Record summary:
Chemical mapping of a 207-nucleotide RNA with 2A3 and DMS. In probing experiments dimethyl sulfate is read out at A N1 and C N3, which are open when not base-paired. For DMS the reverse transcriptase was MarathonRT. The data come from the RNA Mapping Database (RMDB), library RNAMAK. The reactions ran in a buffer of 150 mM KOAc, 10 mM MgCl2 and 150 mM bicine (pH 8.5), at 24 C. The DMS profile rests on 2,088 reads.
RNA sequence: GGGAACGACUCGAGUAGAGUCGAAAACGCUGGGAUUUGUCACGAAACUACCCACCUACAUCUCCCCACCCUGCCUGAAGCGCGCACGGGCAGGAGGAUGUAGAGGUUUCGAAGUCAAAUCCUGUGCUGAAGCGCGCACGGCAACCGAAAGGUGCGAUCAGCUAAUGAAGUUCGCUUCAUUAGCUGAAAAAGAAACAACAACAACAAC
Reactivity to 2A3 in 0.01 (KOAc 150mM, MgCl2 10mM, bicine 150mM(pH8.5), 24C), signal-to-noise 3, nucleotides 027 to 156: c040g010c010u070g000g010g000a010u000u000u010g020u030c010a010c080g000a010a000a000c010u080a080c080c070c050a040c010c000u000a000c000a000u010c050u130c060c060c030c000a070c020c000c000u000g000c000c010u020g010a170a040g020c010g000c000g000c010a000c000g010g010g000c000a000g000g010a030g010g000a000u000g000u000a000g010a010g010g010u000u000u010c030g040a210a040g020u010c000a000a000a000u000c000c010u010g030u020g000c020u070g030a140a060g000c000g000c000g000c000a000c010g030g000c030a050a040c000c010g070a100a040a030g020g010u040g020c050g010a080
Reactivity to DMS in 0.01 (KOAc 150mM, MgCl2 10mM, bicine 150mM(pH8.5), 24C), signal-to-noise 2, nucleotides 027 to 156: c030g030c030u000g010g030g000a080u020u010u000g010u020c050a300c010g010a050a030a060c020u000a070c030c000c000a300c110c020u000a000c010a010u000c020u000c300c020c020c060a300c090c050c000u000g040c000c000u020g010a030a100g000c040g020c010g020c000a300c030g000g040g040c000a050g010g030a040g000g030a020u000g000u000a010g000a180g000g020u000u000u050c020g020a110a160g070u000c020a080a030a030u000c000c000u010g000u000g000c000u000g030a070a090g000c000g000c000g000c010a300c020g030g000c020a140a200c070c020g000a210a200a180g040g000u020g000c020g030a230